[RMDB]
RNA sequence: GGGAACGACUCGAGUAGAGUCGAAAACUUAAAAUGAAUAAAGUCAUGCUAAAGAGCAUUUACUGUGUGCUAGACACUGUUCCAGGGGCUAGUGAACACAGAACCUGCCCUUAAGAAGCUCUUACUGUAGUGGAACAGACAGACAAAUGGACAAACACCCACUGUUCACAUUCGUGUGAACAGUGGGAAAAGAAACAACAACAACAAC
Reactivity to 2A3 in 0.01 (KOAc 150mM, MgCl2 10mM, bicine 150mM(pH8.5), 24C), signal-to-noise 1, nucleotides 027 to 156: c100u170u120a170a000a020a030u060g040a060a020u080a180a210a000g150u130c080a070u040g110c030u080a170a070a000g050a050g120c020a040u040u060u100a080c010u000g010u030g010u000g070c000u020a010g000a070c020a030c100u060g050u100u080c050c080a020g010g050g010g000c030u030a000g000u010g200a070a000c050a000c000a040g070a000a000c000c000u030g010c000c010c000u040u060a050a000g090a030a070g000c000u000c000u030u030a030c010u060g060u160a040g010u040g020g000a000a000c000a000g070a000c000a000g060a000c010a000a030a000u150g010g060a080c120a110a090a010c100a040